[RMDB]
The record gives the reactivity of an RNA of 177 nucleotides to 2A3 and DMS. DMS adducts were read by reverse transcription with MarathonRT. It was measured as part of the RMDB library M2PK90. Values cover nucleotides 27 to 126. The 2A3 profile rests on 3,580 reads.
RNA sequence: GGGAACGACUCGAGUAGAGUCGAAAAGUACACCCUCCCUCCCUGCCAAAAGCGCGCAAAUAAAGGGAGGGACUCAGGGAUGAGUAGGCCAAAAGGCCAUAUCCCGAAGACGCGCGACGGGACAAAAAGAUGGAGUAAGUUUCGACUUACUCCAUCUAAAAGAAACAACAACAACAAC
Reactivity to 2A3 in 0.01 (KOAc 150mM, MgCl2 10mM, bicine 150mM(pH8.5), 24C), signal-to-noise 3, nucleotides 027 to 126: g020u080a050c040a150c090c000c000u020c000c000c000u000c000c010c010u010g060c030c020a050a180a050a000g030c020g010c000g000c070a000a070a140u190a080a120a010g010g010g000a000g010g000g000a000c000u000c050a040g000g010g030a010u040g040a070g160u260a170g050g000c040c010a120a300a090a220g000g000c010c000a030u060a020u040c000c000c010g020a030a000g070a030c050g000c000g010c000g050a030c010g020g030g010a030c060a020a110a040a020
Reactivity to DMS in 0.01 (KOAc 150mM, MgCl2 10mM, bicine 150mM(pH8.5), 24C), signal-to-noise 3, nucleotides 027 to 126: g010u010a130c240a190c010c000c010u000c000c000c000u000c000c000c000u000g010c160c200a050a070a090a130g000c020g010c030g040c080a060a060a110u010a050a090a020g010g000g020a030g000g000g020a000c030u000c090a050g020g010g000a060u010g010a080g010u000a110g010g020c010c010a040a090a110a150g030g000c000c010a080u000a040u000c020c000c000g010a090a110g010a120c070g000c010g020c020g000a130c060g000g010g000a090c110a020a060a060a100